An RNA of 207 nucleotides, treated with 2A3 and DMS and read out base by base. The DMS profile rests on 4,197 reads.

RNA sequence: GGGAACGACUCGAGUAGAGUCGAAAACUCAGUCAGGCUCCCUUGGGCCGCGAUCUCGAUAGGAUCGUCGUCGUUCAGCGCGGCUGCCGACUUCUUGAACCAGCGGUGUGGAUUGUUGCUGGCCGACAUGCAGACGUACUCCUGCGACAGGAGGACGCAACCCGUCAUAGUUCGCUAUGACGGGUUGAAAAGAAACAACAACAACAAC
Reactivity to 2A3 in 0.01 (KOAc 150mM, MgCl2 10mM, bicine 150mM(pH8.5), 24C), signal-to-noise 2, nucleotides 027 to 156: c000u000c020a000g020u050c030a060g020g010c000u040c010c000c000u140u180g000g010g000c000c000g000c000g000a010u010c070u020c060g210a190u200a190g040g020a030u050c040g090u080c060g000u000c040g000u040u020c030a030g020c060g000c020g090g000c070u030g010c000c000g150a210c020u120u150c070u090u190g080a060a090c030c030a010g010c000g050g020u110g010u090g230g100a240u000u120g070u100u250g030c010u000g020g040c010c000g050a090c060a040u190g090c060a000g020a110c000g020u000a010c000u020c000c010u050g020c110g060a040c080a060g000g010a010g020g020a010c020g000
Reactivity to DMS in 0.01 (KOAc 150mM, MgCl2 10mM, bicine 150mM(pH8.5), 24C), signal-to-noise 2, nucleotides 027 to 156: c030u010c030a130g000u000c030a090g030g020c010u000c010c060c030u000u000g000g010g040c010c030g000c000g010a030u000c010u000c000g050a270u010a170g020g000a080u000c020g010u000c100g050u000c020g010u000u000c010a070g050c030g040c020g010g000c040u000g040c050c030g010a090c060u000u000c070u010u000g010a160a150c080c040a080g020c040g000g030u000g000u020g020g010a130u000u000g010u000u000g020c010u000g000g000c050c020g000a130c090a070u010g020c050a130g000a190c040g010u000a050c010u000c010c010u020g030c140g010a150c110a080g050g000a040g010g020a040c000g020
2A3 adducts were read by reverse transcription with SuperScript II with manganese. Reactivities are given for positions 27 through 156. It was measured as part of the RMDB library OK3TST.